This 207-nucleotide RNA was probed chemically with 2A3. Reactivities are given for positions 27 through 156. It was measured as part of the RMDB library OK3TST. The 2A3 profile rests on 858 reads.

[RMDB]
RNA sequence: GGGAACGACUCGAGUAGAGUCGAAAACGUUGACCGUGCGGUUGGGGUACAGCGACUCGACCAGGUCGGCCCAGCCACUCAUGGCCGCGAUCGCGUCCACCCUGUCGUCGGCCGCGGCGGUGAGCGCGCUGAUCCCGGCUCCGUAGGAGAUGCCCGCCGCGCAACCGAGGUUCGCCUCGGUUGCGCGAAAAGAAACAACAACAACAAC
Reactivity to 2A3 in 0.01 (KOAc 150mM, MgCl2 10mM, bicine 150mM(pH8.5), 24C), signal-to-noise 1, nucleotides 027 to 156: c020g000u020u050g020a030c000c080g020u070g060c070g090g000u030u080g070g020g000g010u120a170c020a100g030c030g090a080c030u030c060g040a060c070c030a040g030g010u060c040g010g000c010c000c030a000g040c000c040a040c000u000c000a010u020g160g000c000c010g000c000g020a040u030c010g000c000g000u020c010c040a180c050c000c050u080g000u030c050g000u000c070g000g020c010c000g000c000g000g000c030g030g010u020g000a010g000c050g000c010g030c070u000g000a120u100c000c000c000g040g000c020u030c030c020g070u060a060g010g070a040g000a010u140g020c000c000c000g000c010